[RMDB]
RNA sequence: GGGAACGACUCGAGUAGAGUCGAAAAUCUGUUGGUACUCACAACUUGUUAGUAAGUAGUUAUUUAGGAAUGAAUUAAAAAUCUUUUUCAUUCAAUCUCUGAGUAUCAUAUUUCCAAAUGGCUAUUAACUUAUUAGGACAUAAAUACUUAUUAAGUACAGCUAAAUCCUAUUCGUAGGAUUUAGCUGAAAAGAAACAACAACAACAAC
Reactivity to 2A3 in 0.01 (KOAc 150mM, MgCl2 10mM, bicine 150mM(pH8.5), 24C), signal-to-noise 1, nucleotides 027 to 156: u060c050u040g050u020u040g000g000u000a060c030u000c020a000c020a060a070c070u050u110g030u080u100a100g020u030a230a040g010u030a060g020u130u160a180u090u050u180a060g050g020a030a000u060g000a000a060u050u130a090a120a150a300a150u070c020u080u060u000u000u040c000a000u010u000c020a030a130u070c140u000c060u180g050a000g030u050a030u020c020a000u060a170u150u010u040c020c000a040a000a080u050g000g000c000u020a060u100u060a140a000c000u000u110a000u090u060a150g020g050a020c020a020u230a080a300a000u080a110c000u050u060a110u130u130a170a030g020u050a040